[RMDB]
Annotation:
Chemical mapping of a 177-nucleotide RNA with 2A3 and DMS. The RNA was probed in 150 mM KOAc, 10 mM MgCl2 and 150 mM bicine (pH 8.5) at 24 C. The DMS profile rests on 1,123 reads. Reactivities are given for positions 27 through 126.
RNA sequence: GGGAACGACUCGAGUAGAGUCGAAAACAUCGGCCAGGCGCUCUUUCAGCUUCAGGCCUUCGACAUAGGUCGUGUCGUCGAACAUGCCCAUGUGAAUGUCGGCGCUGAACCCGAGGAGUGACAGACAGCGCCCAUUCUUAUUCGUAAGAAUGGGCGCAAAAGAAACAACAACAACAAC
Reactivity to 2A3 in 0.01 (KOAc 150mM, MgCl2 10mM, bicine 150mM(pH8.5), 24C), signal-to-noise 1, nucleotides 027 to 126: c000a070u140c040g030g000c020c080a030g040g060c010g000c000u000c020u090u220u090c120a080g010c040u010u020c030a030g000g010c010c000u000u020c000g050a000c030a010u120a130g030g090u070c010g040u050g030u050c090g130u040c080g000a070a020c020a010u040g000c000c030c000a030u010g050u010g030a130a050u060g000u090c020g000g000c030g050c050u000g030a060a050c010c000c010g000a020g040g000a040g000u070g050a050c050a060g090a030c030a030
Reactivity to DMS in 0.01 (KOAc 150mM, MgCl2 10mM, bicine 150mM(pH8.5), 24C), signal-to-noise 1, nucleotides 027 to 126: c070a090u040c080g010g010c030c020a130g050g000c030g000c060u000c000u000u010u000c030a060g020c080u000u000c040a080g030g000c010c040u000u000c000g000a070c010a060u000a050g020g000u000c040g070u000g030u000c010g000u000c190g010a100a060c070a000u000g010c020c020c010a070u000g010u010g030a080a060u000g000u000c100g000g000c060g000c010u010g000a060a060c140c050c020g000a030g000g070a100g020u010g000a130c030a110g010a060c170a170
2A3 adducts were read by reverse transcription with SuperScript II with manganese.